[RMDB]
Record summary: Source: RMDB library M2PK50, as collected in RNAgym. This 177-nucleotide RNA was probed chemically with 2A3. 2A3 adducts were read by reverse transcription with SuperScript II with manganese.
RNA sequence: GGGAACGACUCGAGUAGAGUCGAAAAGCCAGAUGCUUCGGCAUCUGGCAAAGGAAUUGAGGUUAGAGUCGACCUGUUAAACAGACUCACAUAUAAUUAAAAAAACCGCCCUCUUCGGAGGGCGGAACAUCUUACAUUGCUUCGGCAAUGUAAGAUGAAAAGAAACAACAACAACAAC
Reactivity to 2A3 in 0.01 (KOAc 150mM, MgCl2 10mM, bicine 150mM(pH8.5), 24C), signal-to-noise 1, nucleotides 027 to 126: g040c000c000a000g030a010u000g000c000u020u020c080g030g000c040a030u010c000u010g030g030c000a030a000a000g040g000a050a110u190u210g040a110g030g000u000u080a130g010a000g040u000c010g010a000c020c000u070g210u060u190a030a000a000c000a120g020a010c010u300c180a000c000a000u300a030u100a070a270u110u300a050a220a020a070a040a000a000c010c000g070c000c000c000u000c020u060u000c160g060g030a000g020g020g030c050g030g010a000a000